Conditions: 150 mM KOAc, 10 mM MgCl2 and 150 mM bicine (pH 8.5), 24 C. Chemical mapping of a 155-nucleotide RNA with 2A3 and DMS. For DMS, 2,450 sequencing reads were counted. 2A3 adducts were read by reverse transcription with SuperScript II with manganese.

RNA sequence: GGGAACGACUCGAGUAGAGUCGAAAAGAAGAAAUAAAUAAUAAAUAAAGCAAGACGGUUAUCAGUCUGCAAGAACCAAUAUGAAAGAAAGAAAGAAAAGAAAAGAAAGAAAAGAAAGCUUACUUUCGAGUGAGCAAAAGAAACAACAACAACAAC
Reactivity to 2A3 in 0.01 (KOAc 150mM, MgCl2 10mM, bicine 150mM(pH8.5), 24C), signal-to-noise 4, nucleotides 027 to 135: g040a030a000g030a040a130a040u220a160a060a050u270a060a080u190a120a150a080u250a130a130a010g010c010a030a030g020a010c020g000g040u080u060a060u140c030a020g000u010c010u030g000c020a020a000g020a020a010c010c020a030a010u090a050u140g080a080a040a030g070a010a080a020g060a040a060a000g080a050a100a030a000g120a020a100a010a000g110a050a040a010g080a020a100a010a000g060a030a050a000g000c000u010u000a000c000u000u020u070c130g000a010g000u010g010a000g000c060a000
Reactivity to DMS in 0.01 (KOAc 150mM, MgCl2 10mM, bicine 150mM(pH8.5), 24C), signal-to-noise 3, nucleotides 027 to 135: g010a170a100g000a090a070a090u040a070a080a110u040a100a130u050a070a120a070u020a090a040a170g010c010a020a030g010a030c060g010g000u030u020a060u020c040a070g010u000c030u010g010c040a090a070g010a080a040c030c040a040a040u020a020u020g000a050a060a030g010a040a030a080g020a030a040a040g000a000a030a050a060g020a030a050a030a040g000a080a020a060g000a070a050a060a100g000a060a060a080g020c050u000u000a090c030u000u000u030c080g010a010g050u000g000a090g000c040a030

Annotation: Source: RMDB library P90LIB, as collected in RNAgym.